Structure probing data (DMS and 2A3) for a 177-nucleotide construct.
The 2A3 profile rests on 1,812 reads.

RNA sequence: GGGAACGACUCGAGUAGAGUCGAAAAACGUGCGAAAGCACGAUGGUUGUCGUAGGAUAUGUAGGAUAUUCCUACAUGAGGAUCACCCAUGUUCGCAUGGAAGAAGGACAGAAGGACGAUGACCAUACUACCCGUAGCACUUCGGUGCUACGGGUAGAAAAGAAACAACAACAACAAC
Reactivity to DMS in 0.01 (KOAc 150mM, MgCl2 10mM, bicine 150mM(pH8.5), 24C), signal-to-noise 1, nucleotides 027 to 126: a180c000g020u030g000c000g000a200a080a130g000c000a000c010g000a020u000g010g000u000u000g010u000c000g020u000a050g010g000a090u010a000u000g040u000a010g000g020a280u030a220u000u000c000c000u000a000c010a040u000g000a080g000g000a140u010c000a180c110c000c000a020u020g010u010u000c120g050c040a010u000g000g020a150a120g000a120a040g030g000a080c020a100g000a130a180g000g000a010c000g000a030u010g000a000c000c000a030u000a160
Reactivity to 2A3 in 0.01 (KOAc 150mM, MgCl2 10mM, bicine 150mM(pH8.5), 24C), signal-to-noise 2, nucleotides 027 to 126: a000c010g000u020g000c000g040a110a050a000g030c000a010c010g010a030u000g000g000u000u020g000u040c010g000u010a040g070g080a120u020a000u190g000u000a000g000g050a080u040a180u300u250c000c000u000a000c000a010u000g030a050g140g000a110u030c020a040c030c000c020a010u000g050u000u080c240g000c080a000u030g010g050a140a070g010a040a080g200g010a010c020a050g050a080a020g070g010a010c000g010a000u020g000a000c000c000a000u020a030
DMS adducts were read by reverse transcription with MarathonRT. The data come from the RNA Mapping Database (RMDB), library OK2TRN. 2A3 adducts were read by reverse transcription with SuperScript II with manganese. The reactions ran in a buffer of 150 mM KOAc, 10 mM MgCl2 and 150 mM bicine (pH 8.5), at 24 C.